[RMDB]
RNA sequence: GGGAACGACUCGAGUAGAGUCGAAAAGCCUCGCAAUGCUGGCCAGUCUUAUAGAAAGUCCCUGUCUUUGGCCCGGUUUCUGGCUCAACCAGCUUUGACAAGGGUGAUGAGUUACUUUGUACCAUAAGGCAAUUUAUAAGGAAGAAACACCUUCAUAGUACCUAAAUGGAUUCGUCCAUUUAGGUACAAAAGAAACAACAACAACAAC
Reactivity to 2A3 in 0.01 (KOAc 150mM, MgCl2 10mM, bicine 150mM(pH8.5), 24C), signal-to-noise 4, nucleotides 027 to 156: g030c000c000u010c030g060c040a060a100u130g020c000u030g020g030c010c020a040g020u030c020u050u230a160u090a150g140a040a080a020g060u050c000c020c010u010g030u010c020u110u050u060g020g000c000c030c040g040g000u050u060u050c050u090g000g000c010u030c060a000a100c030c000a020g030c020u080u050u070g030a060c050a070a070g040g020g000u050g060a090u060g020a020g030u050u020a050c040u100u080u120g050u070a050c010c010a060u020a200a040g010g000c000a010a030u040u140u040a150u080a070a020g020g020a050a050g050a070a120a010c050a040c040c000u020u050c030a070u040a170
Reactivity to DMS in 0.01 (KOAc 150mM, MgCl2 10mM, bicine 150mM(pH8.5), 24C), signal-to-noise 2, nucleotides 027 to 156: g000c030c010u000c050g010c050a110a090u000g010c020u010g020g010c040c050a130g030u000c030u000u000a110u000a100g010a120a130a150g010u010c020c000c020u000g010u000c040u000u000u010g030g000c040c060c060g010g040u010u000u000c030u000g030g000c020u000c070a000a090c010c020a090g020c080u010u000u000g000a120c090a070a100g000g040g000u000g010a060u000g000a120g030u000u000a040c030u000u000u010g030u000a100c060c060a130u000a070a080g020g010c020a060a040u000u010u010a070u010a060a060g020g020a090a110g000a140a090a080c040a020c040c020u000u000c040a040u000a210
Notes:
Chemical mapping of a 207-nucleotide RNA with 2A3 and DMS. The DMS profile rests on 5,094 reads.